RNA sequence: GGGAACGACUCGAGUAGAGUCGAAAACGCACUCGCAGCUUAAUAACCUGCGCUGAGCCCUUCUCCCCCAGCUUGCCUGUGUCCUAGGCAAUUGGAAGGUCAUCCUUCACAGGAUCGUGUGGAAGUCAUUACUCGUGAGUGUUCGCACUCACGAGAAGUGAUAUAGCCUGUUCGCAGGCUAUAUCACAAAAGAAACAACAACAACAAC
Reactivity to DMS in 0.01 (KOAc 150mM, MgCl2 10mM, bicine 150mM(pH8.5), 24C), signal-to-noise 1, nucleotides 027 to 156: c080g000c000a100c040u000c000g000c060a000g030c010u000u000a130a130u000a140a080c260c000u010g010c010g030c130u020g040a080g010c000c000c060u000u000c070u000c040c020c000c000c030a080g000c180u000u000g000c010c000u000g030u010g020u000c090c030u000a060g010g040c060a020a040u000u000g010g000a100a080g010g010u000c200a120u000c030c000u010u000c000a120c100a080g020g010a020u000c160g020u000g020u000g040g000a070a300g000u000c030a120u010u000a250c010u000c000g020u000g000a030g080u010g000u000u000c280g000c010a030c000u000c000a020c000g000a000g030a000a030
Reactivity to 2A3 in 0.01 (KOAc 150mM, MgCl2 10mM, bicine 150mM(pH8.5), 24C), signal-to-noise 2, nucleotides 027 to 156: c040g000c030a040c020u030c000g010c020a010g010c030u010u060a070a030u020a020a090c000c000u000g040c000g020c150u090g010a050g020c000c050c000u160u040c090u050c000c010c000c000c000a000g000c020u010u020g000c000c020u050g010u050g010u280c070c080u060a030g000g000c000a000a090u030u080g050g000a030a020g050g000u090c010a050u070c000c000u050u070c050a060c020a060g000g000a040u020c060g040u080g000u040g090g050a070a060g030u060c010a120u130u120a110c010u000c000g000u000g000a020g000u020g020u050u000c040g020c110a000c000u000c000a010c000g000a000g000a000a000

Chemical mapping of a 207-nucleotide RNA with DMS and 2A3. For 2A3 the reverse transcriptase was SuperScript II with manganese. DMS adducts were read by reverse transcription with MarathonRT. The 2A3 profile rests on 936 reads.